Source: RMDB library OK2TST, as collected in RNAgym. An RNA of 177 nucleotides, treated with 2A3 and DMS and read out base by base. For 2A3, 4,680 sequencing reads were counted. The RNA was probed in 150 mM KOAc, 10 mM MgCl2 and 150 mM bicine (pH 8.5) at 24 C.
RNA sequence: GGGAACGACUCGAGUAGAGUCGAAAACUCAGUUAUAACUGACCUAUCUUCUCUAUUUGCUACUGUUAUUAUCAUUGUUAUUUUGCUCACAGCAGCUGGGUAGUUUCAGCAAAAUAAUACUGAGAAGCCUAAGCUGAAAUUUCGAUUUCAGCUUAGGAAAAGAAACAACAACAACAAC
Reactivity to 2A3 in 0.01 (KOAc 150mM, MgCl2 10mM, bicine 150mM(pH8.5), 24C), signal-to-noise 5, nucleotides 027 to 126: c010u000c010a010g010u040u110a170u070a300a140c020u010g020a020c000c010u040a070u040c010u090u000c040u020c010u050a120u060u110u090g030c020u020a070c030u020g070u110u050a090u110u040a060u100c040a090u060u090g050u070u100a090u080u100u060u080g030c010u030c020a100c020a080g040c000a020g020c040u070g030g010g030u020a030g020u010u090u050c020a000g000c010a000a020a000a010u060a020a020u040a030c020u020g030a010g010a090a000g030
Reactivity to DMS in 0.01 (KOAc 150mM, MgCl2 10mM, bicine 150mM(pH8.5), 24C), signal-to-noise 5, nucleotides 027 to 126: c190u000c010a020g020u000u000a100u010a140a130c030u000g000a040c300c020u010a130u010c010u000u000c070u000c060u000a060u010u000u000g010c110u000a060c070u000g010u000u000a060u000u000a100u000c030a060u000u010g010u000u000a060u000u000u000u000g010c070u010c190a060c110a100g010c040a040g020c050u000g010g000g000u000a040g010u010u000u000c070a010g020c030a020a010a030a030u010a020a030u000a040c110u010g010a060g010a120a140g010